[RMDB]
RNA sequence: GGGAACGACUCGAGUAGAGUCGAAAAGGACAACCGCCGGAGGAUGUCGAUUAAUUCGAUCCAACCAGAAGAACCAGGACUAAGUGCGGAAUACGCAGCAAAGGCCUAGAGACACAGGGCGGAUUGAAAUAUAUUUGUAUUUCGAUACAAAUAUAUUAAAAGAAACAACAACAACAAC
Reactivity to 2A3 in 0.01 (KOAc 150mM, MgCl2 10mM, bicine 150mM(pH8.5), 24C), signal-to-noise 9, nucleotides 027 to 126: g070g020a020c020a050a030c020c020g040c030c040g060g030a070g040g010a050u090g100u110c010g000a010u050u290a190a140u210u030c000g010a010u010c010c010a020a100c020c010a040g030a130a010g020a100a070c020c010a010g000g030a020c010u040a120a070g080u010g030c000g010g080a050a090u300a090c010g000c010a070g060c030a150a100a020g040g000c000c000u040a050g010a010g010a050c010a000c020a090g040g020g000c020g010g000a000u010u070g010a000
Reactivity to DMS in 0.01 (KOAc 150mM, MgCl2 10mM, bicine 150mM(pH8.5), 24C), signal-to-noise 9, nucleotides 027 to 126: g010g010a070c050a060a080c030c020g020c100c090g010g010a160g000g010a090u010g000u010c010g010a120u020u030a080a120u020u000c000g010a020u000c020c010a080a300c020c010a100g010a090a070g010a250a260c050c030a020g000g000a040c010u000a100a220g010u000g000c010g000g010a140a080u060a120c010g000c000a020g020c070a040a190a070g000g000c010c000u000a050g010a090g000a240c230a050c070a130g000g000g010c300g000g010a040u000u010g000a050